[RMDB]
RNA sequence: GGGAACGACUCGAGUAGAGUCGAAAAUCUCUCUAUUCUCCAGAAAGGAGGAAGGAGCUCUCGAACGCCCCCCCGACCCUCGGAUGGGCCGCUUCCGGCAGGGAAGCCCGAAGGUGGGAGAGGGGGAAUACGCGGUGGUUCGCCACCGCGAAAAGAAACAACAACAACAAC
Reactivity to 2A3 in 0.01 (KOAc 150mM, MgCl2 10mM, bicine 150mM(pH8.5), 24C), signal-to-noise 2, nucleotides 027 to 129: u030c000u000c010u000c000u000a100u130u000c000u000c000c000a110g200a300a040a070g040g000a010g000g010a000a020g030g000a020g000c010u000c000u020c000g040a090a020c050g150c000c000c000c000c000c000c000g040a080c000c000c000u040c020g000g050a040u060g060g000g000c040c030g080c020u030u000c000c010g070g150c030a060g180g000g010a040a000g000c010c010c000g020a020a000g020g030u100g010g000g080a110g040a030g010g010g000g010g000a000a000u020a000
Reactivity to DMS in 0.01 (KOAc 150mM, MgCl2 10mM, bicine 150mM(pH8.5), 24C), signal-to-noise 3, nucleotides 027 to 129: u050c020u020c010u000c050u040a280u030u030c000u070c000c040a250g050a060a090a160g020g000a030g080g050a050a190g030g000a080g000c070u040c040u040c040g030a150a080c160g000c190c010c000c000c000c000c000g040a300c020c000c000u010c050g030g060a170u020g020g040g040c090c150g030c110u010u000c000c020g020g080c120a100g030g010g030a030a090g020c000c000c030g000a240a150g090g000u000g080g010g000a120g060a290g000g000g000g000g080a030a000u000a020